[RMDB]
RNA sequence: GGGAACGACUCGAGUAGAGUCGAAAAAAUAGUUUAUGUCCGCCAUAAUCUUUACCUGAAUAGACCAUGGCAUUUUCAAUAGUUAUUGGACCAGGAUUCGCUCUGCCAGAUGUAUUGCAGUAAAGAAACAAGAUUGCUUAUUCGUAAGCAAUCUUGUAAAAGAAACAACAACAACAAC
Reactivity to DMS in 0.01 (KOAc 150mM, MgCl2 10mM, bicine 150mM(pH8.5), 24C), signal-to-noise 4, nucleotides 027 to 126: a050a030u010a080g010u010u000u000a040u010g010u010c080c070g030c190c060a030u000a050a050u000c000u000u000u000a030c070c030u000g010a080a060u010a050g010a040c050c030a080u000g000g000c030a040u010u000u000u000c040a030a060u010a160g010u010u000a150u000u000g000g000a040c090c060a070g000g000a080u000u000c110g000c030u010c010u000g000c020c010a040g000a040u010g020u000a040u000u000g010c060a090g000u000a050a040a090g010a080a080
Reactivity to 2A3 in 0.01 (KOAc 150mM, MgCl2 10mM, bicine 150mM(pH8.5), 24C), signal-to-noise 3, nucleotides 027 to 126: a020a020u170a050g000u040u070u000a040u060g020u010c030c070g030c070c010a060u080a110a040u040c000u050u080u050a060c020c000u000g030a080a050u050a090g060a070c000c070a110u040g000g010c050a050u100u080u050u040c040a070a040u050a130g130u160u200a080u100u050g030g010a030c020c020a030g090g010a050u060u040c070g010c010u020c020u020g000c000c000a020g010a050u070g020u060a050u050u110g080c020a010g020u050a000a110a020g020a030a160